[RMDB]
RNA sequence: GGGAACGACUCGAGUAGAGUCGAAAAAGCCAUACCAUUACGAUGGUAUGGCAAGUCCGUGACGGCGAUGGAUCCCGCCUGGCCGAUGCCGAACUGCCGAUCUGGCUGAUGGUUCUUGCCCCGUCAAAAAACGUAAAGCACUUCGGUGCUUUACGAACCUGUAUAGGUACUUCGGUACCUAUACAGGAAAAGAAACAACAACAACAAC
Reactivity to DMS in 0.01 (KOAc 150mM, MgCl2 10mM, bicine 150mM(pH8.5), 24C), signal-to-noise 2, nucleotides 027 to 156: a140g000c000c000a000u010a020c000c000a030u000u000a100c300g020a140u010g000g020u000a000u000g010g000c020a000a010g030u010c000c020g000u000g020a060c010g010g010c040g010a150u000g000g010a070u000c010c020c080g000c030c020u010g020g000c000c040g000a120u010g010c020c020g010a110a120c040u010g020c010c010g000a070u000c050u000g010g040c020u010g010a130u000g020g000u010u000c060u000u000g030c030c060c010c010g000u000c020a020a030a060a090a050a110c010g010u000a010a010a010g030c000a010c030u000u010c290g020g020u010g010c000u000u010u000a010c010g000a030a030
Reactivity to 2A3 in 0.01 (KOAc 150mM, MgCl2 10mM, bicine 150mM(pH8.5), 24C), signal-to-noise 4, nucleotides 027 to 156: a000g000c000c000a000u010a000c000c000a010u020u040a050c250g090a020u020g000g000u010a000u000g000g010c000a000a010g020u000c000c000g020u040g010a020c010g010g040c080g060a050u090g020g010a020u070c010c020c000g040c000c030u010g020g010c010c030g040a040u100g080c050c030g090a170a100c100u120g030c020c010g080a120u040c050u080g000g010c020u040g040a110u150g020g000u030u020c020u020u070g060c010c020c000c000g000u000c000a050a040a010a030a030a030c010g010u000a000a000a000g000c000a000c020u030u070c200g100g000u000g000c000u000u000u000a000c000g010a000a010